[RMDB]
RNA sequence: GGGAACGACUCGAGUAGAGUCGAAAAGCAUAUGUGCGAAAGCAUAUGUGCGACCAUAUGCGAAAGCGUGUGGGAGGUAACGUGAUCAAAGCGCGAGAUCAUGCGUAGCACGAGUAGGGGCAAACGCCGCUAAGCGUGCGACGAAGGAACGCGAACGACUUACAUAUAUAUUCGUAUAUAUGUAAGUAAAAGAAACAACAACAACAAC
Reactivity to 2A3 in 0.01 (KOAc 150mM, MgCl2 10mM, bicine 150mM(pH8.5), 24C), signal-to-noise 7, nucleotides 027 to 156: g000c000a000u010a010u020g020u020g010c030g130a100a020a020g010c010a000u010a000u000g010u000g000c000g000a010c000c000a010u010a010u030g010c020g070a120a020a040g000c020g010u010g010u010g030g040g040a090g090g050u130a100a030c030g010u020g030a030u040c060a090a080a040g100c020g000c000g020a030g010a040u020c020a010u060g010c000g010u020a010g000c000a000c010g010a010g030u020a010g030g070g010g000c050a230a270a110c190g000c020c020g070c190u010a020a000g020c000g000u000g000c000g000a000c000g000a030a020g070g050a120a050c040g010c010g030a050a030c050g040
Reactivity to DMS in 0.01 (KOAc 150mM, MgCl2 10mM, bicine 150mM(pH8.5), 24C), signal-to-noise 5, nucleotides 027 to 156: g010c000a010u000a010u010g040u000g010c010g010a210a130a300g010c000a010u000a010u000g040u010g010c040g010a080c010c000a030u010a010u010g010c010g020a130a090a220g030c010g050u000g060u000g000g010g020a130g020g000u000a070a070c010g020u010g020a070u000c020a040a100a110g000c030g000c010g010a130g010a050u000c020a040u000g010c020g020u000a060g000c020a010c020g000a060g000u010a030g010g010g020g050c010a090a150a170c300g020c000c010g000c010u000a010a040g010c020g020u000g020c000g000a000c020g000a110a130g020g010a110a080c030g000c000g000a040a090c040g000
This 207-nucleotide RNA was probed chemically with 2A3 and DMS.
The reactions ran in a buffer of 150 mM KOAc, 10 mM MgCl2 and 150 mM bicine (pH 8.5), at 24 C.
DMS (dimethyl sulfate) methylates the pairing face of unpaired adenines and cytosines.
DMS adducts were read by reverse transcription with MarathonRT.
The 2A3 profile rests on 9,580 reads.
Source: RMDB library OK3TST, as collected in RNAgym.